Notes
Structure probing data (2A3 and DMS) for a 177-nucleotide construct. For DMS the reverse transcriptase was MarathonRT. The 2A3 profile rests on 917 reads.
RNA sequence: GGGAACGACUCGAGUAGAGUCGAAAAUGUCACCUUAACUCUCCUAUAGUGAGAGGGAAGAUAGCACAGUUACACGUGCUAAUGGAUGUAAACCAACCAUAUAUACUCCAAGAUGACAGUAUAAUAAUGCUCACUUAAAGUUCGCUUUAAGUGAGCAAAAAGAAACAACAACAACAAC
Reactivity to 2A3 in 0.01 (KOAc 150mM, MgCl2 10mM, bicine 150mM(pH8.5), 24C), signal-to-noise 2, nucleotides 027 to 126: u040g010u000c030a030c020c000u000u010a050a020c000u020c000u100c020c060u180a130u120a300g230u300g070a010g000a010g060g000g000a030a000g000a080u080a000g000c000a000c000a030g040u080u270a050c030a020c100g000u010g030c010u010a010a000u000g020g000a000u050g010u080a150a130a070c080c020a010a010c040c070a050u110a000u010a010u030a080c020u040c040c010a040a000g080a040u000g000a000c010a020g150u150a090u080a270a000u150a110a000
Reactivity to DMS in 0.01 (KOAc 150mM, MgCl2 10mM, bicine 150mM(pH8.5), 24C), signal-to-noise 2, nucleotides 027 to 126: u000g030u000c020a060c070c010u000u000a140a210c000u010c000u000c000c000u030a160u000a160g030u020g010a010g020a040g020g020g010a070a010g000a160u000a000g010c000a030c000a110g000u000u000a120c300a140c190g000u000g000c000u000a030a040u000g000g020a080u000g000u000a070a060a210c180c070a060a100c140c090a050u000a070u000a080u000a150c070u000c020c030a090a040g000a060u000g000a000c030a030g000u000a100u000a030a060u000a060a130
Source: RMDB library OK2TST, as collected in RNAgym.